An RNA of 207 nucleotides, treated with DMS and 2A3 and read out base by base. The DMS profile rests on 4,813 reads. The 2A3 profile rests on 4,382 reads.
RNA sequence: GGGAACGACUCGAGUAGAGUCGAAAACCGGAAUGGUUCCGCCAUGAUCGGGCCAUGCAAUAGUUGCCAACGACAACUAUGCUCCGGUUGCUCAGGCAGCGUAACGCUGCUUGAAAGACCACAUGAAUUAGCGCGACAUUGUUCGCAAUGUCGCGAAGCCAUUUAAACUGUUCGCAGUUUAAAUGGCAAAAGAAACAACAACAACAAC
Reactivity to DMS in 0.01 (KOAc 150mM, MgCl2 10mM, bicine 150mM(pH8.5), 24C), signal-to-noise 2, nucleotides 027 to 156: c000c000g000g030a090a070u000g000g040u000u020c000c020g000c090c100a130u020g020a140u030c000g000g010g000c000c010a030u020g030c100a060a030u000a040g030u000u010g000c000c010a190a180c180g010a100c010a000a000c010u000a020u010g020c130u010c010c010g040g020u000u000g000c120u010c010a010g000g000c000a010g010c010g010u000a070a140c120g000c010u000g020c000u000u000g000a030a050a120g000a300c010c050a100c090a120u000g020a230a200u010u000a110g020c000g020c010g000a030c000a040u000u000g000u010u000c300g020c010a020a010u000g020u000c030g040c000g000a020a100
Reactivity to 2A3 in 0.01 (KOAc 150mM, MgCl2 10mM, bicine 150mM(pH8.5), 24C), signal-to-noise 6, nucleotides 027 to 156: c010c000g000g030a080a080u080g010g030u300u300c000c030g000c070c110a270u260g050a230u120c010g000g010g010c000c020a020u040g030c010a070a300u010a020g010u010u000g020c050c100a150a060c190g090a180c010a000a000c020u000a000u010g000c020u010c010c000g000g000u020u010g000c000u000c010a000g000g000c000a010g000c010g060u190a110a060c290g000c010u010g000c000u010u000g000a010a000a010g030a020c040c000a060c030a180u180g130a160a090u150u140a140g060c000g000c000g000a000c010a000u000u010g000u050u010c100g000c090a010a000u000g000u000c000g000c000g000a010a000